[RMDB]
RNA sequence: GGGAACGACUCGAGUAGAGUCGAAAAGCAAUAACAGGUCUGUGAUGCCCUUAGAUGUCCUGGGCCGCACGCGUGCUACACUGAUGAGUAGAAUGGGUUAAUACUGCAUUUAUUGCUUUCCCUUGACCGUCCCGUAUGACUUCGGUCAUACGGGACGAAAAGAAACAACAACAACAAC
Reactivity to 2A3 in 0.01 (KOAc 150mM, MgCl2 10mM, bicine 150mM(pH8.5), 24C), signal-to-noise 1, nucleotides 027 to 126: g010c000a000a000u010a020a050c040a060g060g080u060c040u070g070u010g050a060u060g000c000c000c000u030u200a150g020a190u130g130u140c040c040u010g040g000g000c000c000g000c000a020c040g080c090g000u040g000c000u040a000c060a000c030u190g090a120u050g110a100g000u040a030g040a060a050u010g000g130g070u010u150a070a010u170a160c000u000g130c040a080u040u040u020a040u000u050g000c000u000u000u000c000c020c000u000u110g020a010c040